An RNA of 177 nucleotides, treated with 2A3 and read out base by base. 2A3 is a SHAPE reagent: it acylates the 2'-hydroxyl of flexible nucleotides of all four kinds.
RNA sequence: GGGAACGACUCGAGUAGAGUCGAAAAACGCCGGCCGGUUACGACCGGCCGGCGAGAGCACGUAAAUGCACUGUGUUGCUAAUUUGGCUCAUCGAAAAUUAGCAGCAUGGCGCAUUUGCGCGCCAAACUAUAUUUCUACCUUCGGGUAGAAAUAUAGAAAAGAAACAACAACAACAAC
Reactivity to 2A3 in 0.01 (KOAc 150mM, MgCl2 10mM, bicine 150mM(pH8.5), 24C), signal-to-noise 2, nucleotides 027 to 126: a000c020g000c010c000g000g000c000c130g070g020u140u120a150c280g060a040c080c020g000g000c000c040g000g000c000g010a000g000a000g000c010a010c000g010u010a000a000a000u010g000c010a000c020u010g000u000g010u010u000g000c000u010a010a010u000u010u030g160g010c090u080c180a150u160c130g110a050a030a000a000u000u000a000g010c000a000g020c000a000u010g000g000c010g000c000a000u000u000u000g010c010g010c010g000c010c000a070a060a000
The reactions ran in a buffer of 150 mM KOAc, 10 mM MgCl2 and 150 mM bicine (pH 8.5), at 24 C.